Notes
The data come from the RNA Mapping Database (RMDB), library OK2TST. The record gives the reactivity of an RNA of 177 nucleotides to DMS and 2A3. For DMS, 1,899 sequencing reads were counted. Values cover nucleotides 27 to 126. For 2A3 the reverse transcriptase was SuperScript II with manganese.
RNA sequence: GGGAACGACUCGAGUAGAGUCGAAAACGCUCAUGCAGACAGAGAGAGACUGACGACAAGCGGCAAUAAAAACAGAUGGAAGGAAGUGGUUGUGUGUUUGCAUUACCGCUCCCUUCUCUCCUGCCUGCUCUUCAUGUGCAUUCGUGCACAUGAAGAGAAAAGAAACAACAACAACAAC
Reactivity to DMS in 0.01 (KOAc 150mM, MgCl2 10mM, bicine 150mM(pH8.5), 24C), signal-to-noise 2, nucleotides 027 to 126: c180g010c020u000c090a080u000g030c020a040g030a060c020a020g000a140g030a090g010a090g000a070c070u000g020a090c100g000a160c170a110a080g010c050g020g010c080a080a080u000a050a070a020a070a110c070a060g010a120u020g000g020a080a030g000g010a020a030g030u000g010g010u000u000g000u000g020u010g000u010u020u020g000c050a010u000u000a030c010c010g000c000u000c020c000c000u000u000c000u020c060u000c060c050u000g010c000c020u000g010
Reactivity to 2A3 in 0.01 (KOAc 150mM, MgCl2 10mM, bicine 150mM(pH8.5), 24C), signal-to-noise 3, nucleotides 027 to 126: c030g040c030u040c010a090u170g020c000a000g020a050c000a010g130a010g010a000g010a000g020a190c030u060g020a050c030g020a040c060a100a010g040c000g070g040c050a060a100u140a130a110a000a030a000c030a010g060a040u100g050g000a030a020g000g000a010a010g010u010g030g010u020u020g010u000g010u010g030u040u210u300g000c000a000u000u010a000c000c010g000c010u030c000c020c000u020u010c000u020c000u000c000c020u030g020c010c020u040g030